This 207-nucleotide RNA was probed chemically with 2A3 and DMS. Reactivities are given for positions 27 through 156. The RNA was probed in 150 mM KOAc, 10 mM MgCl2 and 150 mM bicine (pH 8.5) at 24 C.
[RMDB]
RNA sequence: GGGAACGACUCGAGUAGAGUCGAAAAAUCAUUUUUGCCUCUGAAAAUCAUGGAUCCGCUUCCAGCUGCCAACAAGACAACACUCUGAGAAGCGCUCUCUUGCAGUACAGUGCCGACCACACUGAAUGAAUGGACCAGACCAUACGAUGUGAAGAAAAUAAUCGUAGUGGUUCGCCACUACGAUUAUAAAAGAAACAACAACAACAAC
Reactivity to 2A3 in 0.01 (KOAc 150mM, MgCl2 10mM, bicine 150mM(pH8.5), 24C), signal-to-noise 2, nucleotides 027 to 156: a000u100c010a060u020u010u060u070u060g020c000c020u060c030u060g100a050a050a010a060u110c060a110u090g060g000a020u010c070c050g000c020u030u000c000c030a030g000c040u060g030c040c040a060a070c070a080a040g090a100c000a100a010c010a060c030u060c020u080g060a140g000a140a070g020c020g000c020u000c000u000c000u020u100g040c000a000g000u050a060c000a060g010u000g000c030c060g100a110c040c020a030c000a030c060u020g070a150a070u170g030a010a020u070g040g010a040c000c000a030g020a000c000c050a070u040a070c080g010a060u020g070u110g060a040a070g080a050a170a090
Reactivity to DMS in 0.01 (KOAc 150mM, MgCl2 10mM, bicine 150mM(pH8.5), 24C), signal-to-noise 1, nucleotides 027 to 156: a200u040c110a170u010u000u000u010u000g000c030c020u010c040u000g000a020a230a050a090u010c020a170u010g000g000a070u000c010c030g010c040u000u010c020c010a070g010c110u000g000c020c000a020a170c080a060a040g000a080c070a020a070c010a060c100u020c030u020g030a160g030a100a090g010c000g000c100u020c000u010c030u000u000g020c070a070g000u000a150c040a050g000u000g020c000c020g090a170c020c140a190c010a020c030u000g020a060a100u000g010a120a140u010g010g030a080c110c040a130g000a100c010c020a100u000a070c040g000a150u000g020u000g010a080a100g010a070a110a060